This 177-nucleotide RNA was probed chemically with 2A3. 2A3 adducts were read by reverse transcription with SuperScript II with manganese. The data come from the RNA Mapping Database (RMDB), library OK1LIB.
[RMDB]
RNA sequence: GGGAACGACUCGAGUAGAGUCGAAAAAAUUCAUUUUUAAAUAAAUUGCUUCAAGUUAACUCGCUAUUUAUUUAACUGGGUUUAAACGCAUACCUGUAGUUCAGAAAUUAUGAGCGAUUUUUGAUAGGCCCAUAAAUGGAUUCGUCCAUUUAUGGGCAAAAGAAACAACAACAACAAC
Reactivity to 2A3 in 0.01 (KOAc 150mM, MgCl2 10mM, bicine 150mM(pH8.5), 24C), signal-to-noise 1, nucleotides 027 to 126: a010a010u080u070c030a030u070u140u140u030u030a000a000a000u000a000a000a000u020u060g000c000u150u250c190a230a200g040u170u180a090a020c070u030c040g030c000u000a000u000u000u000a000u010u000u000a000a000c030u030g000g000g110u030u040u070a060a170a000c080g010c040a000u000a230c000c000u010g000u070a080g010u080u000c010a010g070a110a190a000u170u030a190u260g160a030g010c030g000a050u000u050u050u030u050g040a100u050a110g060